[RMDB]
RNA sequence: GGGAACGACUCGAGUAGAGUCGAAAAGACGACAAACCGUGAGUUCUAUUGCCCUUUAUUGUUGGGUGCACCCUGGGACCCAGUAAUGCCCGGGGGGAGGCGGGGUAAACCCAUACCAUGGGAACUGUGACGUCCGCCUUCGGGCGGACGAAAAGAAACAACAACAACAAC
Reactivity to DMS in 0.01 (KOAc 150mM, MgCl2 10mM, bicine 150mM(pH8.5), 24C), signal-to-noise 4, nucleotides 027 to 129: g000a150c050g050a050c130a120a060a100c080c150g000u040g100a210g040u030u000c040u050a000u060u070g020c010c000c000u060u040u070a090u070u030g040u000u000g020g060g090u020g060c040a140c010c000c020u010g000g000g000a110c010c000c030a170g050u010a060a030u090g050c000c010c040g010g000g010g000g050g190a050g010g000c070g000g000g000g060u020a000a200a110c040c000c000a100u030a110c240c100a060u030g000g060g000a080a060c110u090g060u010g040a180
Reactivity to 2A3 in 0.01 (KOAc 150mM, MgCl2 10mM, bicine 150mM(pH8.5), 24C), signal-to-noise 2, nucleotides 027 to 129: g130a020c040g000a140c120a080a010a000c040c040g120u010g150a000g020u080u110c000u010a190u000u190g090c000c000c090u060u140u170a110u110u170g130u000u100g000g000g000u000g000c060a010c000c000c000u020g000g000g000a000c000c000c000a040g030u180a090a090u090g110c000c000c000g010g000g040g000g000g010a170g000g060c020g030g030g000g000u090a150a010a000c000c000c000a040u050a030c060c000a240u120g000g000g010a020a030c030u010g150u160g280a000